Conditions: 150 mM KOAc, 10 mM MgCl2 and 150 mM bicine (pH 8.5), 24 C. An RNA of 170 nucleotides, treated with 2A3 and DMS and read out base by base. It was measured as part of the RMDB library 15KLIB. Values cover nucleotides 27 to 129. For 2A3 the reverse transcriptase was SuperScript II with manganese.
RNA sequence: GGGAACGACUCGAGUAGAGUCGAAAAUUCUAAAAUGACCGAGAGGGGGUGCUAGGAACACGGGGGCCCAGUGGAGCCAUGGGAUGCUCCUCCCGAUUCCGUCCAACCCCUUCCCCCGAGGGUCGCCAUGGGAGUAUGUUCGCAUACUCCAAAAGAAACAACAACAACAAC
Reactivity to 2A3 in 0.01 (KOAc 150mM, MgCl2 10mM, bicine 150mM(pH8.5), 24C), signal-to-noise 9, nucleotides 027 to 129: u040u010c010u050a020a020a030a100u160g030a040c030c040g040a030g010a030g110g000g000g000g000u030g030c070u100a040g020g030a050a020c200a070c150g010g000g000g020g020c030c010c000a030g040u100g070g050a020g010c040c030a140u100g020g040g040a060u160g030c030u020c010c000u040c000c000c000g010a010u020u000c010c000g030u060c030c030a060a070c010c000c000c000u010u020c010c000c000c000c010g080a120g040g030g010u010c020g010c040c030a120u140g110
Reactivity to DMS in 0.01 (KOAc 150mM, MgCl2 10mM, bicine 150mM(pH8.5), 24C), signal-to-noise 9, nucleotides 027 to 129: u020u010c060u030a050a030a070a070u040g000a080c050c060g000a080g020a040g010g020g010g010g010u040g020c140u040a110g000g000a000a000c110a050c060g020g010g010g010g020c050c020c040a060g000u030g020g010a010g020c010c020a140u030g000g010g000a300u040g000c120u030c060c010u000c010c010c000g000a300u000u000c010c020g020u030c300c150a080a080c000c000c010c010u000u000c020c000c010c020c020g010a120g010g020g020u000c000g000c070c070a080u050g010
The DMS profile rests on 86,895 reads.